[RMDB]
RNA sequence: GGGAACGACUCGAGUAGAGUCGAAAAACAGGACCCGCACGGGAAGCUCGUACUCGGCCACCUCAGCCGGAUCGGGGAACCGGUCUGCCUCGAGAAGCCCCACCUUCCCCGGUCCCAGUCUCACCGCCAUAGUACAGGGAUUCGUCCCUGUACUAUGAAAAGAAACAACAACAACAAC
Reactivity to DMS in 0.01 (KOAc 150mM, MgCl2 10mM, bicine 150mM(pH8.5), 24C), signal-to-noise 6, nucleotides 027 to 126: a120c090a140g010g010a110c020c010c120g040c180a090c120g010g010g000a070a080g010c120u000c090g010u010a100c080u000c070g000g010c020c060a080c110c030u000c050a060g010c120c060g000g000a020u000c000g010g000g000g030a080a080c080c060g010g000u000c050u000g000c100c010u010c080g010a090g010a280a190g010c040c020c070c050a090c110c040u010u000c000c000c000c060g020g010u000c010c010c050a070g000u000c030u000c040a120c080c070g000c180
Reactivity to 2A3 in 0.01 (KOAc 150mM, MgCl2 10mM, bicine 150mM(pH8.5), 24C), signal-to-noise 4, nucleotides 027 to 126: a000c020a040g030g030a040c020c030c040g010c090a060c060g010g000g040a030a010g030c040u090c230g050u080a050c070u040c090g000g020c020c030a070c030c030u040c030a020g050c020c030g010g000a010u010c000g000g000g000g050a030a080c040c020g000g010u020c020u030g010c000c020u090c080g080a100g030a120a020g020c010c000c000c010a040c000c010u010u010c020c000c000c010g000g000u020c000c010c000a020g040u010c010u010c040a070c030c040g060c040